This 207-nucleotide RNA was probed chemically with DMS and 2A3.
[RMDB]
RNA sequence: GGGAACGACUCGAGUAGAGUCGAAAAUGCAAUAGCUGACAUUCAGAAUGCCUGCGAGGAUUUUGUAAGUGAGGUUCAUAUUUCGGAUAAUGUGUGACUUUUGCCAUUUCUGAUGCUUUUCCAAAAGAAAGUUACUCUUCCCUAAAGGCAGGAAUUCCCCAUGAUCCUCAUUCGUGAGGAUCAUGGGAAAAGAAACAACAACAACAAC
Reactivity to DMS in 0.01 (KOAc 150mM, MgCl2 10mM, bicine 150mM(pH8.5), 24C), signal-to-noise 1, nucleotides 027 to 156: u010g000c020a170a130u010a120g030c050u000g000a110c030a040u000u000c080a020g010a190a080u000g030c070c030u000g000c060g020a080g020g010a150u000u000u000u000g020u010a000a140g020u010g010a050g000g040u010u000c030a010u010a130u000u000u000c090g050g000a090u000a070a030u000g050u030g020u000g000a050c050u010u010u000u010g050c040c010a130u010u000u000c070u010g030a210u000g000c020u000u000u000u000c230c020a090a060a060a260g030a040a010a090g010u010u000a020c050u000c150u000u000c010c020c030u000a080a030a080g000g010c030a060g000g000a100a110u000u000c000
Reactivity to 2A3 in 0.01 (KOAc 150mM, MgCl2 10mM, bicine 150mM(pH8.5), 24C), signal-to-noise 3, nucleotides 027 to 156: u070g000c030a010a150u030a130g050c030u020g060a070c000a030u030u020c020a080g050a090a020u050g070c010c020u070g030c040g030a070g040g020a030u010u140u150u140g080u090a090a120g050u080g140a050g000g080u120u170c070a040u070a060u110u060u110c080g080g000a040u070a160a060u090g110u010g020u050g120a150c020u010u090u140u160g000c010c010a040u040u060u000c040u100g050a030u040g010c000u060u020u060u030c010c000a010a040a020a000g060a020a040a000g030u040u080a030c010u040c040u080u050c010c000c010u050a080a080a020g060g000c010a010g000g010a000a050u030u040c000

For DMS, 1,706 sequencing reads were counted.
2A3 adducts were read by reverse transcription with SuperScript II with manganese.